RNA sequence: GGGAACGACUCGAGUAGAGUCGAAAACCUUGGUCCUUCGGGACCAAGGAAACCCGAAGUCAUACAGACUGUGGGCGGCGAGACAAUCCACAAGAGUCGCUAAAAGCGUCUGGUUCGCCAGACGCAAGGAGUAAAACUACUUCGGUAGUUUUACUCCAAAAGAAACAACAACAACAAC
Reactivity to DMS in 0.01 (KOAc 150mM, MgCl2 10mM, bicine 150mM(pH8.5), 24C), signal-to-noise 2, nucleotides 027 to 126: c000c000u000u000g020g000u000c000c000u000u010c140g020g050g040a010c000c000a000a000g010g000a020a050a120c000c000c010g030a100a050g010u010c020a120u010a150c210a180g000a050c040u000g020u000g020g010g010c120g030g010c070g000a210g000a020c120a130a100u010c070c040a070c040a020a230g010a140g000u000c010g020c060u000a030a030a090a130g000c010g000u000c010u000g000g030u000u010c160g080c000c000a000g000a000c000g010c000a010a000
Reactivity to 2A3 in 0.01 (KOAc 150mM, MgCl2 10mM, bicine 150mM(pH8.5), 24C), signal-to-noise 2, nucleotides 027 to 126: c000c020u000u000g020g000u000c010c020u030u030c240g070g010g020a000c000c000a000a000g000g000a070a000a000c020c000c000g030a060a020g040u030c030a040u110a300c070a170g030a020c020u010g050u120g110g040g000c010g020g000c050g000a070g000a060c040a060a150u030c030c030a060c020a110a000g040a000g070u000c010g010c030u030a020a000a070a130g020c000g020u000c000u000g010g050u020u050c170g010c030c000a000g010a020c000g010c010a000a030